[RMDB]
RNA sequence: GGGAACGACUCGAGUAGAGUCGAAAAACACCAAAACUGAAAAGGGAAGGCAAUCCUUCCACGACGAUACUUACUUUCCUUUGAUCGUCGUUACUACUGGCAUAGCCACAAAGGAGAACAAACAUGAGCGCGGACACUGACUUCGGUCAGUGUCCAAGAAAAUUAACUGCUUCGGCAGUUAAUUUUCAAAAGAAACAACAACAACAAC
Reactivity to 2A3 in 0.01 (KOAc 150mM, MgCl2 10mM, bicine 150mM(pH8.5), 24C), signal-to-noise 4, nucleotides 027 to 156: a010c100a100c020c020a050a040a050a090c130u210g030a120a110a080a050g040g000g000a010a000g020g000c160a070a200u260c010c000u010u010c000c000a000c000g000a000c000g000a000u070a180c020u070u030a040c020u060u170u060c020c010u070u030u050g030a000u010c000g000u010c000g010u030u050a020c030u020a020c050u020g030g000c060a220u110a090g050c020c000a020c020a020a030a000g030g010a030g020a060a020c040a090a070a030c060a130u240g080a080g100c130g010c070g050g000a010c000a000c010u010g010a000c010u030u060c150g020g000u000c000a000g000u000g010u000c000c000a000a000
Reactivity to DMS in 0.01 (KOAc 150mM, MgCl2 10mM, bicine 150mM(pH8.5), 24C), signal-to-noise 1, nucleotides 027 to 156: a060c040a100c100c050a060a010a120a180c090u010g000a030a040a110a100g000g000g000a030a070g030g020c090a150a080u000c040c010u010u000c010c010a180c030g020a030c020g000a010u000a010c050u030u010a130c100u000u010u000c070c090u000u020u000g010a020u000c000g020u000c030g000u000u010a110c080u000a080c060u000g010g000c040a230u010a140g000c000c000a120c100a100a180a080g000g020a050g010a110a230c060a140a110a050c110a110u000g010a140g000c150g010c100g020g000a060c020a010c000u020g000a030c000u000u010c250g000g020u010c000a030g050u000g000u000c000c000a000a060

An RNA of 207 nucleotides, treated with 2A3 and DMS and read out base by base. The DMS profile rests on 1,650 reads. For 2A3, 2,412 sequencing reads were counted. In probing experiments dimethyl sulfate is read out at A N1 and C N3, which are open when not base-paired.